[RMDB]
RNA sequence: GGGAACGACUCGAGUAGAGUCGAAAAGUCUGGUGCCUAUGUGAAUAGAGCAUUGCCUGGGUUGACAGAUAUUACUUGUUCUAUAGGAGUGAACCCACACAACUAUGAAUGUUUUUGCUGACCAGAGAUACGCCGUAGAAUUCGUUCUACGGCGUAUAAAAGAAACAACAACAACAAC
Reactivity to DMS in 0.01 (KOAc 150mM, MgCl2 10mM, bicine 150mM(pH8.5), 24C), signal-to-noise 2, nucleotides 027 to 126: g010u000c070u010g010g020u000g010c010c020u000a020u000g000u000g010a170a020u000a030g020a140g000c030a040u000u000g020c050c020u000g020g000g020u000u020g010a090c030a030g010a070u000a020u010u010a080c110u010u010g010u000u000c040u000a050u000a020g000g010a290g020u000g000a070a080c040c010c020a260c030a010c010a030a190c020u010a040u000g000a060a030u000g000u000u000u000u000u000g020c020u010g000a050c030c010a110g010a130g010
The data come from the RNA Mapping Database (RMDB), library OK2TRN. Chemical mapping of a 177-nucleotide RNA with DMS. DMS adducts were read by reverse transcription with MarathonRT. Reactivities are given for positions 27 through 126. The reactions ran in a buffer of 150 mM KOAc, 10 mM MgCl2 and 150 mM bicine (pH 8.5), at 24 C.